[RMDB]
RNA sequence: GGGAACGACUCGAGUAGAGUCGAAAAAGUGUCGGGUUAAGUCCCUUAACGAGCGCAACCCCUAUCGUUAGUUGCCCACGGUUCGGCCGGGUACUCUAGCGAGACUGCCGGCGUUAAGCCGGAGGAAUAAUUGGCUUACCUUCGGGUAAGCCAAUUAAAAAGAAACAACAACAACAAC
Reactivity to DMS in 0.01 (KOAc 150mM, MgCl2 10mM, bicine 150mM(pH8.5), 24C), signal-to-noise 3, nucleotides 027 to 126: a060g020u000g000u030c090g030g040g000u000u000a030a070g010u060c080c050c020u000u020a120a100c050g020a150g010c040g020c070a120a030c040c020c010c060u010a070u010c010g030u010u010a000g010u000u000g000c020c020c200a300c070g000g010u000u040c130g000g000c010c020g050g000g000u000a000c260u000c010u010a000g020c000g000a020g020a080c030u010g000c000c000g000g000c020g000u010u070a120a160g000c020c000g000g010a010g000g010a110a080
Reactivity to 2A3 in 0.01 (KOAc 150mM, MgCl2 10mM, bicine 150mM(pH8.5), 24C), signal-to-noise 3, nucleotides 027 to 126: a000g150u100g100u110c040g010g010g010u050u000a070a020g260u060c010c010c030u000u060a100a070c060g050a010g050c060g030c060a030a120c000c000c000c000u040a040u050c000g000u020u010a000g000u010u010g030c000c090c110a080c040g050g020u080u100c170g080g030c030c000g010g000g010u030a040c040u010c000u030a000g000c040g030a020g000a030c090u160g060c020c000g020g000c050g090u210u240a120a000g000c000c000g000g010a000g010g020a030a060
The record gives the reactivity of an RNA of 177 nucleotides to DMS and 2A3. The RNA was probed in 150 mM KOAc, 10 mM MgCl2 and 150 mM bicine (pH 8.5) at 24 C. 2A3 adducts were read by reverse transcription with SuperScript II with manganese.